[RMDB]
The record gives the reactivity of an RNA of 207 nucleotides to DMS and 2A3. 2A3 is a SHAPE reagent: it acylates the 2'-hydroxyl of flexible nucleotides of all four kinds. The reactions ran in a buffer of 150 mM KOAc, 10 mM MgCl2 and 150 mM bicine (pH 8.5), at 24 C. Reactivities are given for positions 27 through 156.
RNA sequence: GGGAACGACUCGAGUAGAGUCGAAAAUCCUAAGUCCGUUCUUAAUCCCGAAGAACUUCUCGGGAGGUCAGUCGGAAACGACUGACCGAAGAACGAGAAGGGAGGGAUUGUGCACGGAUAUGGAAAACGUCAUAAAACGUUCGCGUUUUAUGACGAACACAAACUGUUUGUUCGCAAACAGUUUGUGAAAAGAAACAACAACAACAAC
Reactivity to DMS in 0.01 (KOAc 150mM, MgCl2 10mM, bicine 150mM(pH8.5), 24C), signal-to-noise 1, nucleotides 027 to 156: u000c030c000u020a070a190g040u000c010c020g010u000u000c010u010u000a060a070u000c020c000c000g000a110a220g030a120a140c010u000u010c010u000c020g010g010g010a200g060g030u000c010a040g000u020c010g020g000a140a110a280c020g010a070c000u000g010a000c000c000g000a040a090g040a110a240c020g010a050g020a060a060g000g020g010a240g000g010g000a010u000u000g000u000g010c050a080c000g000g040a060u000a140u000g000g000a040a080a120a160c020g040u000c010a000u000a000a000a020a020c010g030u000u030c300g050c000g040u010u000u000u020a010u000g010a000c000g030a110a130
Reactivity to 2A3 in 0.01 (KOAc 150mM, MgCl2 10mM, bicine 150mM(pH8.5), 24C), signal-to-noise 1, nucleotides 027 to 156: u020c010c000u020a110a010g050u000c000c000g000u020u010c020u110u190a010a000u020c030c000c000g140a280a070g010a110a050c000u000u000c000u000c000g000g000g010a010g000g000u000c000a000g010u000c010g080g000a050a000a000c010g000a010c000u000g000a000c000c000g000a010a010g000a010a000c000g000a000g000a000a000g010g000g010a030g010g000g000a000u000u010g000u000g000c020a000c010g010g000a010u030a050u070g020g010a030a150a030a050c010g000u000c000a000u000a000a010a000a000c000g020u050u110c300g010c000g060u000u030u000u010a010u000g000a010c000g010a030a000